Chemical mapping of a 177-nucleotide RNA with DMS and 2A3. DMS adducts were read by reverse transcription with MarathonRT. For DMS, 2,781 sequencing reads were counted.
RNA sequence: GGGAACGACUCGAGUAGAGUCGAAAACAGCCGCCUGUUGCGAAGACUGGGGCAGAGAAUAAUGAGAGGGCAGCGAGGGAUGCGACUGCAGCUGCAGCUGUAGCUGCCGAAGCCCACGGGAAGCGGGUAGCUUCAAUACCUUCGGGUAUUGAAGCUAAAAAGAAACAACAACAACAAC
Reactivity to DMS in 0.01 (KOAc 150mM, MgCl2 10mM, bicine 150mM(pH8.5), 24C), signal-to-noise 3, nucleotides 027 to 126: c080a120g010c030c040g020c010c020u010g000u000u020g010c100g010a110a090g020a110c070u010g000g000g000g000c030a060g010a150g010a130a080u000a080a090u020g010a140g010a130g000g020g010c060a040g010c060g010a100g010g000g010a110u000g000c020g010a090c070u000g010c030a050g020c050u000g000c020a080g010c130u000g000u000a090g010c020u000g000c000c070g020a080a200g010c000c020c020a050c080g000g010g010a090a080g010c060g000g000g000
Reactivity to 2A3 in 0.01 (KOAc 150mM, MgCl2 10mM, bicine 150mM(pH8.5), 24C), signal-to-noise 2, nucleotides 027 to 126: c010a020g050c030c030g160c010c020u080g030u100u090g150c070g060a170a050g030a030c060u050g030g010g060g000c060a010g040a010g050a130a080u230a190a130u190g070a090g030a090g100g040g040c060a020g060c040g030a080g070g040g030a060u080g040c040g010a040c030u050g060c050a030g020c000u120g000c020a040g060c060u180g020u070a010g000c000u000g000c000c000g000a000a010g010c000c000c020a030c000g020g010g010a050a040g040c000g000g000g020